[RMDB]
RNA sequence: GGGAACGACUCGAGUAGAGUCGAAAAUAAUUGUGGCGCUUGGAAUCAAAUGGAGGAAAUUGUUGAAAAAGCAGCCAAUCCUAAACAUGGAGUUAAAACCAAGGAAUUAGCAGGUAAAGUACAAAAAGGUACAUCAACAAUUCGUUGUUGAUGUACCAAAAGAAACAACAACAACAAC
Reactivity to DMS in 0.01 (KOAc 150mM, MgCl2 10mM, bicine 150mM(pH8.5), 24C), signal-to-noise 3, nucleotides 027 to 126: u010a140a110u040u050g000u000g000g000c060g040c000u060u040g000g050a220a100u010c090a070a050a060u010g030g010a030g000g020a080a040a080u000u000g010u000u000g000a060a080a120a100a000g030c000a020g020c020c040a020a090u000c040c000u000a010a070a080c140a120u000g000g010a020g020u000u000a090a090a050a060c030c070a030a020g010g000a090a070u010u040a140g000c070a020g000g000u030a030a030a050g030u000a050c070a020a060a030a090a060
Reactivity to 2A3 in 0.01 (KOAc 150mM, MgCl2 10mM, bicine 150mM(pH8.5), 24C), signal-to-noise 2, nucleotides 027 to 126: u160a000a070u030u080g040u090g080g010c060g000c030u050u060g050g010a120a130u030c050a090a000a220u100g010g050a150g030g010a100a150a160u170u010g040u000u020g050a000a130a000a000a000g030c000a000g000c000c000a000a180u100c000c000u110a060a090a030c090a090u040g030g150a160g050u070u050a030a000a000a200c010c010a030a020g000g000a130a060u160u030a170g030c100a030g000g010u050a080a110a050g030u080a180c140a110a010a010a010a010